[RMDB]
RNA sequence: GGGAACGACUCGAGUAGAGUCGAAAACAAAAUGGGAUCGCUGAAUUAGAGAUCGGCGUCCUUUCAUUCUAUAUACUUUGGAGUUUUAAAAUGUCUCUAAUAAAACAAAAACAAAAACAAAAACAAACAGCUUACUACAGUUCGCUGUAGUGAGCUGAAAAGAAACAACAACAACAAC
Reactivity to DMS in 0.01 (KOAc 150mM, MgCl2 10mM, bicine 150mM(pH8.5), 24C), signal-to-noise 2, nucleotides 027 to 126: c070a110a110a110a050u000g010g000g000a000u030c020g060c010u000g000a020a160u000u030a030g000a070g010a050u000c020g010g000c030g010u010c000c030u000u000u030c050a050u000u000c070u000a100u060a140u120a010c140u000u040u020g000g010a180g000u020u000u000u070a010a030a160a050u030g000u000c020u000c000u000a030a070u060a070a030a110a090c110a030a030a100a070a030c080a060a060a020a090a090c120a070a060a050a040a060c160a020a060a180
Reactivity to 2A3 in 0.01 (KOAc 150mM, MgCl2 10mM, bicine 150mM(pH8.5), 24C), signal-to-noise 8, nucleotides 027 to 126: c020a010a080a020a110u120g010g000g010a070u270c110g000c010u000g000a050a020u040u050a040g000a010g010a050u010c010g000g000c000g000u010c000c000u010u040u020c010a010u050u000c050u040a140u030a050u040a270c090u120u070u190g090g020a060g050u050u080u070u150a160a240a100a100u150g030u000c000u000c000u000a040a050u110a080a120a020a010c080a030a070a040a010a010c080a050a080a080a030a000c060a030a110a060a020a010c040a010a070a010